[RMDB]
The data come from the RNA Mapping Database (RMDB), library 15KLIB. This 170-nucleotide RNA was probed chemically with 2A3 and DMS. Values cover nucleotides 27 to 129. For 2A3 the reverse transcriptase was SuperScript II with manganese. For 2A3, 38,615 sequencing reads were counted.

RNA sequence: GGGAACGACUCGAGUAGAGUCGAAAACCGAAGCGAGGGGGAAAGUAAAGAGAGCAACGGGGCUAGCGAGUGGAUGUUCCGCCUCCCCAGGGUCCCGAGUGAGGCUUAUCCCGGGGAACUCGGCCCAAAAACCUAAGAUUCGUCUUAGGUAAAAGAAACAACAACAACAAC
Reactivity to 2A3 in 0.01 (KOAc 150mM, MgCl2 10mM, bicine 150mM(pH8.5), 24C), signal-to-noise 8, nucleotides 027 to 129: c000c010g010a030a010g030c040g010a050g000g010g000g010g010a040a030a010g040u100a040a050a020g060a010g000a000g010c010a030a070c060g020g010g040g020c020u040a040g050c020g050a030g020u070g030g050a070u070g070u170u050c030c020g040c010c000u030c020c000c000c000a040g020g030g010u050c020c000c000g010a020g010u120g020a040g020g010c010u040u060a050u110c010c010c000g000g000g000g000a020a000c010u010c020g020g000c010c000c010a040a040a010a010
Reactivity to DMS in 0.01 (KOAc 150mM, MgCl2 10mM, bicine 150mM(pH8.5), 24C), signal-to-noise 7, nucleotides 027 to 129: c000c020g020a140a060g000c070g020a050g010g000g010g020g020a010a040a050g000u000a050a030a040g020a050g000a070g000c000a070a080c090g030g000g020g040c060u010a100g000c100g000a050g010u010g020g020a080u040g030u060u000c080c040g000c080c040u000c010c010c010c000a120g010g000g040u000c100c030c000g000a010g020u020g000a020g000g000c110u040u020a110u030c050c000c040g030g000g020g020a050a030c050u020c010g020g000c010c000c020a020a010a010a030

High DMS reactivity at an A or C suggests that its Watson-Crick edge is free.